[RMDB]
RNA sequence: GGGAACGACUCGAGUAGAGUCGAAAACCUUUGGUUCGCCAAAGGAACUGCGGGGUCUCCGACGAUCGUGAAUAAGGCGAGGAUCCUGAAGCCUCCACGGGGGAGCCUUACACGGGAGGAGACGGAGGCACCCUAAACAACGCUUUUCGAAGCGUAACAAUAUGUUACUGUUCGCAGUAACAUAUUGAAAAGAAACAACAACAACAAC
Reactivity to DMS in 0.01 (KOAc 150mM, MgCl2 10mM, bicine 150mM(pH8.5), 24C), signal-to-noise 1, nucleotides 027 to 156: c000c000u000u010u030g000g020u000u010c240g040c020c020a040a030a010g010g020a070a070c110u000g030c140g030g000g010g000u000c000u010c000c000g010a060c140g010a130u030c010g000u000g000a090a230u000a050a050g000g000c000g000a070g040g000a040u010c020c050u000g000a010a160g000c080c020u000c000c100a300c000g040g040g050g000g000a170g040c000c030u000u000a040c000a040c000g000g010g000a280g030g000a080g000a060c030g010g000a060g100g010c000a050c010c030c000u000a000a000a110c050a130a090c000g020c020u000u000u000u000c240g000a060a020g040c010g010u000a060a200
Reactivity to 2A3 in 0.01 (KOAc 150mM, MgCl2 10mM, bicine 150mM(pH8.5), 24C), signal-to-noise 4, nucleotides 027 to 156: c010c000u000u000u000g060g000u050u060c210g000c070c000a000a000a000g020g010a050a040c070u160g030c090g030g050g010g010u010c010u010c010c000g080a110c000g020a040u040c000g000u010g040a280a160u110a040a000g010g000c010g030a200g040g040a020u030c000c000u050g080a130a080g100c030c040u070c050c060a050c030g010g000g000g000g010a010g000c010c000u000u000a000c000a000c010g000g010g020a040g060g030a080g090a040c010g000g010a010g010g000c010a300c010c000c020u080a080a070a000c070a060a000c010g010c000u030u040u090u170c220g080a020a000g000c010g010u020a040a000

The record gives the reactivity of an RNA of 207 nucleotides to DMS and 2A3. High 2A3 reactivity points to a flexible backbone, as in loops and unpaired stretches. Conditions: 150 mM KOAc, 10 mM MgCl2 and 150 mM bicine (pH 8.5), 24 C. The 2A3 profile rests on 4,663 reads.